[RMDB]
RNA sequence: GGGAACGACUCGAGUAGAGUCGAAAACCUACUACCACACUCAUUCACACCCACCACACAACUAUCAAUAAACCUGGGUAUAGCAAUCCCCCUAUGAUCAGCAACCGUAUUCACAGGAUUCCGCUAUAAAACCAAAACAUCACUAGCCCACUUUCUAGCUAUUACAUAGGUUCGCCUAUGUAAUAGCAAAAGAAACAACAACAACAAC
Reactivity to DMS in 0.01 (KOAc 150mM, MgCl2 10mM, bicine 150mM(pH8.5), 24C), signal-to-noise 1, nucleotides 027 to 156: c010c000u000a040c070u010a130c030c000a080c030a110c060u020c000a130u000u010c080a100c110a080c000c030c010a110c050c030a040c090a110c030a040a020c000u000a200u000c030a130a130u010a070a070a080c030c020u010g020g040g030u000a040u010a070g010c040a150a130u010c030c000c030c030c030u010a010u010g010a040u000c000a110g030c070a220a020c070c000g000u000a090u000u000c070a090c000a090g010g020a080u000u000c000c010g000c020u020a060u000a010a040a060a140c040c020a030a120a010a060c070a030u000c020a060c050u000a080g010c020c020c020a150c120u010u000u000c010u020a260
Reactivity to 2A3 in 0.01 (KOAc 150mM, MgCl2 10mM, bicine 150mM(pH8.5), 24C), signal-to-noise 3, nucleotides 027 to 156: c000c000u020a050c040u090a070c000c010a010c010a010c060u060c020a080u150u030c050a030c010a020c050c000c000a000c000c040a030c010a010c020a080a120c080u160a090u210c060a150a130u070a190a110a060c020c030u060g000g000g060u080a040u070a070g130c060a030a220u100c010c010c000c030c000u050a080u120g040a070u030c010a000g030c020a040a010c000c000g030u050a100u080u060c040a030c020a060g020g000a020u090u040c000c010g020c040u010a020u040a160a110a010a020c040c010a040a060a020a020c050a020u110c030a010c040u020a020g020c000c000c000a030c020u010u020u010c030u040a020